[RMDB]
RNA sequence: GGGAACGACUCGAGUAGAGUCGAAAAUUGGCACAGGACAAUAUAUGUUUCCAAAAUCGACUCCUUAGCUGUCUAGCUAAUGGUACGUAUGCGGGGGCUGAUUUCAUUGGACAGAUUGUUCUCAGCCCCAUGCCGAUGAAUUCGUUCAUCGGCAUGGAAAAGAAACAACAACAACAAC
Reactivity to 2A3 in 0.01 (KOAc 150mM, MgCl2 10mM, bicine 150mM(pH8.5), 24C), signal-to-noise 2, nucleotides 027 to 126: u080u050g020g000c020a070c060a120g030g060a030c020a040a020u060a010u030a040u210g050u040u090u000c020c000a030a030a010a050u030c020g080a090c010u020c040c000u040u050a000g010c020u040g090u280c090u100a030g080c050u120a160a040u140g020g030u140a030c020g070u080a050u150g030c040g010g000g010g000g000c010u000g000a000u010u050u080c080a030u030u100g000g010a010c000a040g080a060u030u030g010u010u000c010u010c010a000g000c000c000
Reactivity to DMS in 0.01 (KOAc 150mM, MgCl2 10mM, bicine 150mM(pH8.5), 24C), signal-to-noise 4, nucleotides 027 to 126: u010u000g010g010c140a180c210a090g010g000a060c030a040a030u000a070u010a090u010g010u000u000u010c000c050a070a060a080a060u000c030g000a070c060u000c030c010u000u000a080g020c010u010g010u010c170u010a060g000c040u000a040a040u010g020g020u000a020c090g010u000a060u020g010c080g010g000g010g000g010c010u000g000a040u010u000u000c100a110u010u000g000g020a070c160a070g010a050u000u000g000u000u000c020u000c060a110g000c010c000
Annotation:
The record gives the reactivity of an RNA of 177 nucleotides to 2A3 and DMS. For 2A3 the reverse transcriptase was SuperScript II with manganese. The DMS profile rests on 4,979 reads. Values cover nucleotides 27 to 126. Source: RMDB library OK2TRN, as collected in RNAgym.